[RMDB]
RNA sequence: GGGAACGACUCGAGUAGAGUCGAAAAUAUGAUUUGUUCGUUACAAGAAAUUGGUAUUUCAAGUAACUAUAUACCGAAAAGUUUUGAAUCAGGCAUUUAUGUUUUUAGUGAAUCCCAAGUUCCAGGAUACGAUAAAAAUCUUCGGAUUUUUAUCGUAAAAAGAAACAACAACAACAAC
Reactivity to DMS in 0.01 (KOAc 150mM, MgCl2 10mM, bicine 150mM(pH8.5), 24C), signal-to-noise 2, nucleotides 027 to 126: u000a030u010g010a060u000u000u000g010u000u000c100g010u010u020a020c010a030a300g010a010a000a050u000u010g030g010u010a080u020u000u000c050a040a300g010u000a030a030c020u000a190u000a020u000a030c010c060g010a050a080a120a200g000u000u000u010u000g010a050a050u000c150a070g010g000c010a010u000u000u010a000u000g000u000u000u000u010u010a110g020u000g000a130a090u010c000c000c050a140a130g000u020u000c030c010a090g000g030a250